RNA sequence: GGGAACGACUCGAGUAGAGUCGAAAACUUCGCAACUUCGGUUGCGAAGAAUGGCAGCUCGUCCCGGCGCUGGGUUCGCCGGGUUAUAAAACAUAACAGAUCACUGGCUACCAUUCGUGGUAGCCAAUGACCAUACCAAAUUCGUUUGGUAUGGUCAAAAAGAAACAACAACAACAAC
Reactivity to 2A3 in 0.01 (KOAc 150mM, MgCl2 10mM, bicine 150mM(pH8.5), 24C), signal-to-noise 1, nucleotides 027 to 126: c000u010u000c000g000c000a000a010c000u070u060c240g140g000u000u000g000c000g000a010a000g000a000a000u050g020g010c030a040g010c030u040c020g090u110c000c020c020g010g000c010g030c040u190g090g070g060u090u030c000g000c010c040g020g000g000u010u030a040u030a000a070a000a000c030a020u120a090a060c020a080g120a080u140c020a030c110u050g000g000c000u010a000c000c000a010u050u100c180g060u010g030g000u000a010g040c010c000a000a000
Reactivity to DMS in 0.01 (KOAc 150mM, MgCl2 10mM, bicine 150mM(pH8.5), 24C), signal-to-noise 3, nucleotides 027 to 126: c000u000u000c010g010c000a000a000c000u000u010c210g020g010u000u000g010c010g000a010a000g000a040a070u000g000g010c130a090g000c020u000c030g010u020c010c010c000g000g000c020g020c100u000g000g010g010u010u000c010g000c000c000g010g000g000u000u000a010u000a040a050a070a090c200a040u010a050a080c150a080g000a090u010c080a080c190u010g000g000c000u000a010c000c000a060u000u010c200g030u010g000g010u000a000g000c000c000a000a020